[RMDB]
RNA sequence: GGGAACGACUCGAGUAGAGUCGAAAAUCGACCUGCAAGACCGCAAUACCGAGUUGUCUUACCAACUGAUGCUGGACAGUUUGGUGGACCGGUCGCGCUACUUUAGCAUGUGGAACCAAGCCGUCGAUAGUUAUGACCCAGACGUGCGUGUUCUGGAGGAUGUGAGAACAUUCGUGUUCUCACAUCCAAAAGAAACAACAACAACAAC
Reactivity to 2A3 in 0.01 (KOAc 150mM, MgCl2 10mM, bicine 150mM(pH8.5), 24C), signal-to-noise 1, nucleotides 027 to 156: u050c000g000a080c030c030u080g000c010a060a030g000a040c000c020g020c070a020a180u080a010c000c000g020a030g040u070u050g000u030c010u050u290a070c030c010a070a050c050u190g040a110u170g100c040u150g000g050a020c000a010g010u030u000u000g050g000u000g000g040a000c000c000g000g000u000c000g000c000g000c020u040a050c070u150u110u190a070g000c030a030u090g030u090g000g030a080a020c030c000a130a000g000c000c000g010u000c020g050a040u000a130g130u160u110a090u120g060a030c000c030c030a000g000a070c130g070u160g030c090g090u040g050u030u000c000u000g000g000a000